[RMDB]
RNA sequence: GGGAACGACUCGAGUAGAGUCGAAAAGGUGGCCAAGGUGGAUCACCUGAGGAAUUCGACGCCGUAUGGGAUGAGUUUGCUGGGGGAAAUCCACAGGCUGUGAUUAUGUUUGCCGCCAUGAAGCCUGGCUGGGAACCUUAUUCGUAAGGUUCCCAGCAAAAGAAACAACAACAACAAC
Reactivity to 2A3 in 0.01 (KOAc 150mM, MgCl2 10mM, bicine 150mM(pH8.5), 24C), signal-to-noise 4, nucleotides 027 to 126: g000g000u020g000g000c020c010a100a050g140g010u010g020g060a100u040c010a020c020c000u000g050a030g000g100a050a060u030u040c010g080a110c080g140c040c000g070u270a150u300g060g030g020a050u080g010a070g090u000u040u140g190c050u070g020g020g010g000g010a050a030a000u020c000c000a010c000a000g020g000c100u050g020u040g040a080u100u300a090u170g060u030u040u060g020c010c000g000c000c010a010u150g070a040a010g050c000c010u040g120
Reactivity to DMS in 0.01 (KOAc 150mM, MgCl2 10mM, bicine 150mM(pH8.5), 24C), signal-to-noise 2, nucleotides 027 to 126: g000g050u000g010g170c040c100a050a070g030g070u000g000g000a010u000c040a300c030c010u010g040a070g010g000a050a080u000u020c000g000a160c220g020c010c040g060u050a110u080g020g000g050a070u000g040a090g010u060u000u030g000c020u020g000g020g020g000g000a090a160a070u010c040c000a000c020a100g010g000c070u020g000u030g000a140u060u060a040u000g010u000u030u040g000c040c000g020c030c000a040u000g000a070a060g050c030c030u010g010
The record gives the reactivity of an RNA of 177 nucleotides to 2A3 and DMS. For 2A3 the reverse transcriptase was SuperScript II with manganese. For DMS the reverse transcriptase was MarathonRT. For DMS, 2,027 sequencing reads were counted. The data come from the RNA Mapping Database (RMDB), library OK1LIB. The RNA was probed in 150 mM KOAc, 10 mM MgCl2 and 150 mM bicine (pH 8.5) at 24 C.